Chemical mapping of a 177-nucleotide RNA with DMS and 2A3. The DMS profile rests on 3,515 reads. 2A3 adducts were read by reverse transcription with SuperScript II with manganese. The RNA was probed in 150 mM KOAc, 10 mM MgCl2 and 150 mM bicine (pH 8.5) at 24 C. DMS adducts were read by reverse transcription with MarathonRT. For 2A3, 3,561 sequencing reads were counted.
RNA sequence: GGGAACGACUCGAGUAGAGUCGAAAAUGCUUGGACCAUCAAUAUAGCUUAGCCUGGUUCAGGGUCGGGCUGUGUUGGUCCUGAACCCGGCCUUGGUCAUAGGCUGAAUGCACCGACAAAGGUGGUAGGCUGGUUACACGUUCGCGUGUAGCCAGCCAAAAGAAACAACAACAACAAC
Reactivity to DMS in 0.01 (KOAc 150mM, MgCl2 10mM, bicine 150mM(pH8.5), 24C), signal-to-noise 2, nucleotides 027 to 126: u020g010c030u010u040g000g040a020c000c000a080u040c110a140a100u040a080u000a060g010c090u000u020a100g000c020c000u000g010g030u000u010c010a030g010g000g000u000c010g030g020g010c150u000g000u010g030u030u000g010g000u000c000c000u000g020a070a060c010c000c040g000g000c000c120u010u010g000g000u010c050a080u020a040g000g000c000u000g000a050a140u070g010c010a150c050c030g010a050c200a090a070a130g010g000u000g010g010u060a120
Reactivity to 2A3 in 0.01 (KOAc 150mM, MgCl2 10mM, bicine 150mM(pH8.5), 24C), signal-to-noise 5, nucleotides 027 to 126: u120g010c020u010u030g090g020a030c010c000a020u110c040a100a090u160a050u060a220g090c040u110u080a000g000c010c010u020g040g000u060u060c010a000g030g000g010u020c030g020g090g000c120u100g040u050g050u270u220g040g040u050c000c030u020g030a060a060c000c000c000g000g000c000c000u020u050g000g000u020c020a130u070a050g040g000c000u030g070a070a010u130g020c010a010c040c030g140a150c220a100a120a020g050g000u020g050g050u050a080